[RMDB]
RNA sequence: GGGAACGACUCGAGUAGAGUCGAAAAGAUAUGGAGUGGCAGGGAUAACAAGCCGUUGAAAUCGGAAACGAUGGAGGCUUGCUAAUACCUGCACUCCUAAGUCAAAACUCGAUGUUCGCAUCGAGAAGCUAACAAAUUACUUCGGUAAUUUGUUAGCAAAAGAAACAACAACAACAAC
Reactivity to 2A3 in 0.01 (KOAc 150mM, MgCl2 10mM, bicine 150mM(pH8.5), 24C), signal-to-noise 1, nucleotides 027 to 126: g040a010u090a050u150g000g010a020g010u100g170g170c000a020g040g000g010a030u060a110a010c000a010a000g000c010c040g080u160u040g020a040a040a000u000c000g020g000a100a040a030c020g000a010u010g010g030a010g000g000c000u000u000g000c000u030a020a020u120a180c010c000u000g000c010a000c000u000c000c000u010a010a000g010u010c030a020a020a060a140c000u010c010g000a010u010g060u070u130c300g010c160a010u000c000g010a000g030a020a020
Reactivity to DMS in 0.01 (KOAc 150mM, MgCl2 10mM, bicine 150mM(pH8.5), 24C), signal-to-noise 5, nucleotides 027 to 126: g000a040u010a300u000g000g000a020g020u010g020g050c000a020g000g010g020a140u000a080a110c010a010a010g020c000c010g000u000u000g020a090a130a030u000c000g000g000a150a110a190c000g010a010u000g010g000a050g020g010c010u000u010g000c010u000a070a070u000a130c010c000u000g010c010a010c000u000c000c000u010a000a060g010u010c030a100a050a090a190c000u000c000g000a000u000g010u000u010c240g020c000a010u000c010g000a010g000a080a090